RNA sequence: GGGAACGACUCGAGUAGAGUCGAAAAAGUCACCUAUUACGAUAGGUGACAUUUGAACCAGCGAACAAUUCAGUUGCGAGAUUCGAGGUUUCAGUCUGAAUCAUAGUAGCCAUUACUAUGGCUACAACUCACUCCCGACUGUUCGCAGUCGGGAGAAGCAAUCUUCAUUCUUCGGAAUGAAGAUUGCAAAAGAAACAACAACAACAAC
Reactivity to 2A3 in 0.01 (KOAc 150mM, MgCl2 10mM, bicine 150mM(pH8.5), 24C), signal-to-noise 2, nucleotides 027 to 156: a000g000u000c000a010c000c000u000a000u020u120a110c250g050a000u000a010g000g000u030g000a000c010a000u000u020u070g020a030a040c000c000a010g120c000g000a000a000c020a010a130u010u000c000a010g000u000u010g000c000g020a000g000a000u000u000c000g010a040g070g030u050u240u300c040a020g100u040c000u010g000a010a000u070c130a100u060a120g000u000a000g020c010c000a030u140u150a110c220u210a040u030g000g000c000u000a000c000a000a020c020u090c070a110c010u000c000c000c000g000a000c000u000g060u110u170c240g010c130a010g010u000c000g020g000g000a000g000a000a000

Structure probing data (2A3) for a 207-nucleotide construct. Conditions: 150 mM KOAc, 10 mM MgCl2 and 150 mM bicine (pH 8.5), 24 C. The 2A3 profile rests on 1,136 reads.